[RMDB]
RNA sequence: GGGAACGACUCGAGUAGAGUCGAAAAUCUCCUUCCGCUCCUGAGCGGUUGUGGAGCUCGAUAGCAACCUCAGGUAUCAAAAGACUUAAAGCAGGUGUCAAAGAUGUGCGAUUAGUCUCUGACAAGAUAAGAUUUGUAGCUCUUGUUUGGAGCAACAGUCGAUUUAUUUAUUCGUAAAUAAAUCGACAAAAGAAACAACAACAACAAC
Reactivity to 2A3 in 0.01 (KOAc 150mM, MgCl2 10mM, bicine 150mM(pH8.5), 24C), signal-to-noise 4, nucleotides 027 to 156: u020c020u030c000c010u080u030c040c020g020c020u060c040c080u130g070a020g020c050g030g000u000u030g010u070g030g050a080g020c060u060c060g100a080u080a120g030c000a040a060c010c010u010c020a020g010g000u060a070u110c050a010a080a050a040g050a070c030u110u170a080a060a030g000c050a050g000g080u060g040u080c040a020a070a120g040a070u090g040u090g110c020g050a050u040u130a040g020u030c000u010c010u050g020a010c010a040a030g020a070u080a140a040g050a110u090u220u250g110u170a030g010c000u000c000u030u050g070u060u120u240g020g000a010g020c020a020a030c010a020
Reactivity to DMS in 0.01 (KOAc 150mM, MgCl2 10mM, bicine 150mM(pH8.5), 24C), signal-to-noise 2, nucleotides 027 to 156: u010c010u000c020c070u020u000c040c030g020c040u000c020c070u000g000a100g060c040g010g020u000u000g000u000g010g010a150g030c060u000c080g000a110u000a300g000c030a070a050c010c030u000c060a030g020g050u000a070u000c090a100a070a130a150g000a070c060u000u000a070a060a120g010c070a120g000g010u000g000u000c070a060a120a130g030a070u010g010u000g010c020g010a190u010u000a120g020u010c000u000c030u000g010a020c000a070a060g030a130u000a070a170g010a150u000u000u010g030u000a210g020c090u000c020u000u000g010u000u000u010g070g000a050g030c050a080a120c020a100